This 207-nucleotide RNA was probed chemically with 2A3 and DMS.
[RMDB]
RNA sequence: GGGAACGACUCGAGUAGAGUCGAAAAAACUCAGCUAGGGAGAGUAUAACAUUCAUGUUGACGAGACCUAGACGAAACAGAGAGGAAAAUUAUUAAUCACUGGAUAGUAUUAGUAAUGACUCUGUGUAAAACUCUUCUACGUUCGCGUAGAAGAGAACCUUUACGCUAACUUCGGUUAGCGUAAAGGAAAAGAAACAACAACAACAAC
Reactivity to 2A3 in 0.01 (KOAc 150mM, MgCl2 10mM, bicine 150mM(pH8.5), 24C), signal-to-noise 3, nucleotides 027 to 156: a000a000c030u040c010a020g000c000u000a000g000g020g000a040g010a030g070u060a090u120a300a040c100a050u210u230c060a080u220g000u070u030g040a050c030g000a040g050a070c000c000u000a000g030a040c000g010a010a000a000c000a000g030a010g020a050g030g100a120a080a080a010u000u000a000u000u000a000a020u040c050a020c080u090g050g060a140u280a300g010u020a000u010u000a000g000u000a010a010u010g030a030c000u000c000u010g010u010g050u050a030a020a090a090c000u000c000u000u000c000u000a000c000g040u020u040c170g000c000g050u010a000g000a000a000g000a000g000a000a000
Reactivity to DMS in 0.01 (KOAc 150mM, MgCl2 10mM, bicine 150mM(pH8.5), 24C), signal-to-noise 1, nucleotides 027 to 156: a090a070c060u000c030a140g040c010u000a020g000g020g000a220g020a190g000u000a090u010a050a030c030a070u000u000c150a180u000g000u000u000g010a110c020g000a300g010a120c000c010u000a010g000a290c130g020a100a120a020c020a030g000a080g030a210g010g010a100a140a100a070u000u000a030u000u000a000a000u000c120a060c020u000g050g000a170u010a050g040u000a010u000u000a030g000u000a000a010u000g020a110c020u000c000u000g000u000g020u000a010a020a040a080c000u010c000u030u000c000u000a000c000g020u000u010c170g040c050g090u000a010g010a010a010g010a040g020a020a020